This 207-nucleotide RNA was probed chemically with 2A3. The reactions ran in a buffer of 150 mM KOAc, 10 mM MgCl2 and 150 mM bicine (pH 8.5), at 24 C. It was measured as part of the RMDB library PDB130. For 2A3 the reverse transcriptase was SuperScript II with manganese.
RNA sequence: GGGAACGACUCGAGUAGAGUCGAAAAUUGGUACGCUCAAGGGCGAUCGGGUCAGAAAAUCUACCGGUCACAUGCCUCAGACGUAUCGGGAGCUUCCUCGGAAGCGAAGUUGGAAACGCGACGGUGCCAAGAAAAGCUUCUAAACGUUGAAACAUGACGGAGUUUAUUACUUCGGUAAUAAACUCCGAAAAGAAACAACAACAACAAC
Reactivity to 2A3 in 0.01 (KOAc 150mM, MgCl2 10mM, bicine 150mM(pH8.5), 24C), signal-to-noise 1, nucleotides 027 to 156: u150u100g010g000u010a020c010g000c100u010c010a080a080g010g040g010c010g010a000u000c020g000g030g040u130c150a050g160a160a250a080a170u000c000u070a070c020c040g000g040u020c070a070c100a160u220g030c010c000u000c030a020g020a030c000g000u010a010u000c020g000g040g000a000g010c030u040u060c020c030u000c030g040g050a010a010g000c030g030a060a000g000u040u040g030g020a190a190a100c090g050c100g120a040c000g000g130u110g000c030c000a000a000g070a020a050a030a000g010c000u020u000c020u070a080a100a030c050g000u000u020g030a060a090a060c080a040u100g020a020